[RMDB]
RNA sequence: GGGAACGACUCGAGUAGAGUCGAAAAGCGCUUAAAUUAAAUAUCCCUUGCUGAGCUCAUCUCAGCAAACAAUAACAAAUAACAAAUAAGAACAGCAGGGAAGGCUGUUCUUAUUUGUUACAAUAAACCUAUUAAGACCUUUCGAGGUCUUAAUAGGAAAAGAAACAACAACAACAAC
Reactivity to 2A3 in 0.01 (KOAc 150mM, MgCl2 10mM, bicine 150mM(pH8.5), 24C), signal-to-noise 3, nucleotides 027 to 126: g030c080g020c110u150u160a050a100a110u200u160a070a080a050u240a070u030c000c010c010u000u010g000c000u010g000a010g010c080u060c120a150u150c070u000c010a000g020c000a010a000a010c010a010a020u210a060a030c030a080a130a020u090a010a000c000a000a010a000u010a000a010g010a000a000c000a010g040c020a010g150g100g140a070a040g110g010c000u000g000u000u000c000u000u010a000u000u010u000g000u000u000a000c000a000a000u050a000a010a000
Reactivity to DMS in 0.01 (KOAc 150mM, MgCl2 10mM, bicine 150mM(pH8.5), 24C), signal-to-noise 2, nucleotides 027 to 126: g010c180g010c060u000u000a090a050a080u010u020a080a090a140u010a200u000c010c020c000u010u000g000c000u000g030a010g010c300u030c290a100u020c000u000c000a010g020c010a020a040a060c090a100a050u010a040a080c100a070a150a170u010a000a010c000a010a000a000u000a000a020g000a030a000c010a010g000c000a050g010g000g010a120a100g000g010c000u010g000u010u000c010u000u000a000u000u000u000g000u000u000a000c080a070a030u000a060a060a150
An RNA of 177 nucleotides, treated with 2A3 and DMS and read out base by base. Conditions: 150 mM KOAc, 10 mM MgCl2 and 150 mM bicine (pH 8.5), 24 C. For 2A3, 3,515 sequencing reads were counted. It was measured as part of the RMDB library M2PK90. As a SHAPE reagent, 2A3 marks flexible, mostly unpaired nucleotides at the ribose 2'-OH.